[RMDB]
RNA sequence: GGGAACGACUCGAGUAGAGUCGAAAACUUUCUUCACUGUUUAAACAUGUUCCACAUUUUUCUAAUGCCUUCUGAGGGUUCUCAACCCAGCCACUGAGUUCCUCACCCUUGGCGACUGUGAUACCAACAAUGCUGUCACCCUCCUUGGGAAACAUGACACGUGCUAAAUCUUCGGAUUUAGCACGUGAAAAGAAACAACAACAACAAC
Reactivity to 2A3 in 0.01 (KOAc 150mM, MgCl2 10mM, bicine 150mM(pH8.5), 24C), signal-to-noise 1, nucleotides 027 to 156: c030u080u080u060c010u140u210c080a070c030u040g060u110u060u020a100a220a070c060a150u210g020u110u070c060c000a140c120a180u020u050u050u080u250c080u080a130a150u090g070c120c070u180u060c080u110g000a080g000g010g060u140u020c000u000c060a070a100c060c060c060a010g220c070c000a050c080u040g010a000g090u000u060c050c000u050c050a160c030c000c000u010u010g030g000c000g000a020c010u070g030u030g060a000u100a110c000c020a000a100c040a200a180u200g020c090u020g050u040c010a050c000c000c020u000c010c010u020u020g030g000g070a160a000a000c020a010u010g030a000
The record gives the reactivity of an RNA of 207 nucleotides to 2A3. The RNA was probed in 150 mM KOAc, 10 mM MgCl2 and 150 mM bicine (pH 8.5) at 24 C. Values cover nucleotides 27 to 156. Source: RMDB library OK3TST, as collected in RNAgym. The 2A3 profile rests on 315 reads.